[RMDB]
RNA sequence: GGGAACGACUCGAGUAGAGUCGAAAAUAAAGUCUUGCUCUGUCGCCAGGCUGGAGUGCAGUGCAGUGGUGCAAUGUCAGCUCACUGCAACUUCUGCCUCCUGGGUUCAAGUGAUUCCCCUGCCUCAGCCUCUCAAGUAGGUGGGACUACAGGUGCAGUACUAGUAGCUGUUCGCAGCUACUAGUACAAAAGAAACAACAACAACAAC
Reactivity to 2A3 in 0.01 (KOAc 150mM, MgCl2 10mM, bicine 150mM(pH8.5), 24C), signal-to-noise 2, nucleotides 027 to 156: u130a010a050a000g000u020c030u020u020g010c010u000c010u040g060u070c070g040c050c030a000g020g000c020u030g010g000a020g000u040g030c050a010g020u000g000c030a040g000u080g130g120u150g050c110a200a230u300g100u230c040a010g010c010u000c000a000c010u020g000c000a030a030c010u060u060c010u010g000c000c000u050c000c030u020g030g000g020u020u150c050a070a090g030u020g090a040u070u080c000c040c030c000u060g000c000c000u060c030a060g070c020c000u040c010u000c020a050a100g020u070a040g220g030u020g050g030g000a000c000u040a010c040a000g010g020u040g040c020a010
Reactivity to DMS in 0.01 (KOAc 150mM, MgCl2 10mM, bicine 150mM(pH8.5), 24C), signal-to-noise 1, nucleotides 027 to 156: u000a070a070a120g030u010c030u000u010g000c000u000c050u000g030u000c050g120c020c030a080g030g060c040u030g000g010a080g030u000g030c030a040g030u000g000c030a030g040u010g000g040u000g040c050a110a080u020g010u000c040a140g010c000u000c020a010c000u000g000c030a030a040c040u000u000c020u000g010c000c000u000c000c040u030g000g000g020u000u000c060a060a020g000u000g010a230u000u000c000c020c010c030u000g030c010c010u000c040a100g000c010c020u010c020u000c100a070a130g010u000a050g010g000u000g000g030g010a060c020u000a050c070a090g040g010u000g020c060a150
The record gives the reactivity of an RNA of 207 nucleotides to 2A3 and DMS. DMS adducts were read by reverse transcription with MarathonRT. Values cover nucleotides 27 to 156. It was measured as part of the RMDB library OK3TST. The DMS profile rests on 3,879 reads.